[RMDB]
RNA sequence: GGGAACGACUCGAGUAGAGUCGAAAAGCGAGUUUGUUCGCAAACUCGCAAAGAAAGCUCGAGCGAAGGGAACCCAAACGACGCUCGAGCAAGGGACCCAAAAAAUCUACGGCUUCGGCCGUAGAAAGCAUUUAUAUAACUUCGGUUAUAUAAAUGCAAAAGAAACAACAACAACAAC
Reactivity to DMS in 0.01 (KOAc 150mM, MgCl2 10mM, bicine 150mM(pH8.5), 24C), signal-to-noise 3, nucleotides 027 to 126: g000c020g010a010g010u000u000u010g030u000u000c200g020c010a010a000a010c000u000c000g030c010a020a050a050g000a150a140a130g000c000u000c000g000a020g000c000g000a070a210g010g000g000a070a120c090c080c070a060a120a150c010g010a300c010g010c010u000c000g010a020g000c000a010a010g000g000g010a160c000c000c010a010a000a080a080a040a100u000c000u000a000c010g000g000c010u000u010c200g020g010c010c000g020u000a010g000a020a060a100
Reactivity to 2A3 in 0.01 (KOAc 150mM, MgCl2 10mM, bicine 150mM(pH8.5), 24C), signal-to-noise 2, nucleotides 027 to 126: g000c000g000a000g010u000u010u020g040u020u040c040g010c030a010a000a000c000u000c000g000c010a010a010a000g010a030a050a000g000c000u010c000g010a000g000c010g030a020a010g110g000g050a180a160c020c030c000a070a090a020c010g020a010c010g000c000u000c000g000a000g000c010a000a010g050g020g000a020c000c000c000a070a090a040a000a000a040u020c000u000a000c000g010g010c010u040u090c270g100g000c010c010g010u000a000g010a010a000a000